Notes:
Conditions: 150 mM KOAc, 10 mM MgCl2 and 150 mM bicine (pH 8.5), 24 C. An RNA of 177 nucleotides, treated with DMS and 2A3 and read out base by base. For 2A3, 4,298 sequencing reads were counted. Source: RMDB library OK1LIB, as collected in RNAgym.
[RMDB]
RNA sequence: GGGAACGACUCGAGUAGAGUCGAAAAGAUCUGUUAAGCCUACGAAGUCGCCAGUAGGCUUUCGCACACGGUCUUCGGACGGUCGACUUCGUGUCAUACUCUUCGAAGUAUGGCGUGCAGAUCGAAAGGGUGAGACGUCCUUCGGGGUGUCUCACCCAAAAGAAACAACAACAACAAC
Reactivity to DMS in 0.01 (KOAc 150mM, MgCl2 10mM, bicine 150mM(pH8.5), 24C), signal-to-noise 3, nucleotides 027 to 126: g000a020u000c010u000g000u020u010a080a090g020c000c000u020a020c000g010a040a010g020u000c030g030c020c000a200g000u010a030g010g000c020u000u010u020c150g000c110a110c120a030c120g000g010u000c000u000u010c050g000g010a130c170g020g040u030c010g020a000c020u000u000c010g010u000g030u000c000a010u000a010c000u000c040u040u030c270g000a090a010g010u000a000u000g000g030c010g000u040g010c000a010g000a020u000c000g020a100a130a120
Reactivity to 2A3 in 0.01 (KOAc 150mM, MgCl2 10mM, bicine 150mM(pH8.5), 24C), signal-to-noise 3, nucleotides 027 to 126: g000a000u010c000u010g010u080u150a120a050g110c000c020u010a010c000g010a030a000g040u030c020g000c030c000a010g020u040a010g040g000c030u000u020u000c010g000c000a030c030a040c120g020g020u000c000u030u030c030g120g080a100c090g000g080u230c050g040a000c000u000u010c010g010u010g000u000c000a000u000a020c000u020c050u210u300c140g030a020a010g010u000a010u000g010g000c000g000u050g000c000a000g010a010u000c010g010a070a030a010